Source: RMDB library M2RFPK, as collected in RNAgym. Structure probing data (2A3 and DMS) for a 207-nucleotide construct. For DMS, 5,713 sequencing reads were counted.
[RMDB]
RNA sequence: GGGAACGACUCGAGUAGAGUCGAAAAGAGAUGGCGAGAGCCAUCGGUAGUAUAGCGAAAAUCAUAAAUGAGAAGAGCCCUAAACGCCUAAGUAGAGUUAAAAUAAUUAGACAGGCACUACUACAAACACGGCCUCGAACGUUCGCGUUCGAGGCAACAUACACAGUAUGUUCGCAUACUGUGUAUGAAAAGAAACAACAACAACAAC
Reactivity to 2A3 in 0.01 (KOAc 150mM, MgCl2 10mM, bicine 150mM(pH8.5), 24C), signal-to-noise 6, nucleotides 027 to 156: g100a000g000a000u010g010g000c010g010a050g000a010g070c000c000a010u000c010g010g000u010a010g000u000a030u080a030g050c050g050a050a070a060a030u090c060a060u110a200a130a060u160g030a030g020a120a020g020a010g020c020c000c000u040a080a080a020c060g000c000c010u030a090a030g020u060a040g050a030g060u080u090a050a110a080a110u170a060a080u070u060a040g020a060c030a020g000g030c030a000c010u020a010c000u010a010c050a020a120a010c080a030c110g110g000c010c000u000c000g000a000a000c010g000u050u070c180g000c010g100u000u000c000g000a000g000g000c000a000a000
Reactivity to DMS in 0.01 (KOAc 150mM, MgCl2 10mM, bicine 150mM(pH8.5), 24C), signal-to-noise 3, nucleotides 027 to 156: g010a110g020a030u010g030g000c050g000a300g000a300g010c000c000a010u000c000g010g010u000a040g020u000a070u000a100g010c010g000a050a090a110a120u000c040a100u020a050a060a100u010g000a170g000a100a110g000a190g010c020c020c010u020a040a080a090c050g000c010c010u000a040a050g020u000a040g010a140g020u010u010a060a050a040a120u000a030a080u000u000a080g010a050c010a090g010g020c060a050c040u000a030c040u000a100c050a080a100a100c060a060c090g020g010c000c020u000c020g020a030a020c020g000u000u000c300g030c030g030u000u000c000g010a030g000g040c000a000a020
The RNA was probed in 150 mM KOAc, 10 mM MgCl2 and 150 mM bicine (pH 8.5) at 24 C.